An RNA of 177 nucleotides, treated with DMS and read out base by base.
RNA sequence: GGGAACGACUCGAGUAGAGUCGAAAAGACACGACGGAGACGUCGUGUCAAAGAGUGGGAAACCACUCAAAGAGCCACAGCUUCGGCUGUGGCUCAAGGCGCGGCACCGUCCCCGGAUCAAACGGAAGGGAUAUAAUUUAUUCGUAAAUUAUAUCCCAAAAGAAACAACAACAACAAC
Reactivity to DMS in 0.01 (KOAc 150mM, MgCl2 10mM, bicine 150mM(pH8.5), 24C), signal-to-noise 3, nucleotides 027 to 126: g000a060c040a010c040g000a010c000g010g000a250g000a200c030g020u000c000g050u000g000u000c000a030a080a090g000a020g010u000g010g000g000a180a080a210c000c000a000c000u000c000a060a100a130g010a050g010c000c000a000c010a020g020c000u000u010c300g000g020c040u030g040u010g000g000c000u000c000a010a040g010g010c080g020c120g020g020c040a080c100c030g000u000c010c010c000c040g020g000a070u000c120a050a060a080c100g000g010a110a140

The RNA was probed in 150 mM KOAc, 10 mM MgCl2 and 150 mM bicine (pH 8.5) at 24 C. DMS adducts were read by reverse transcription with MarathonRT.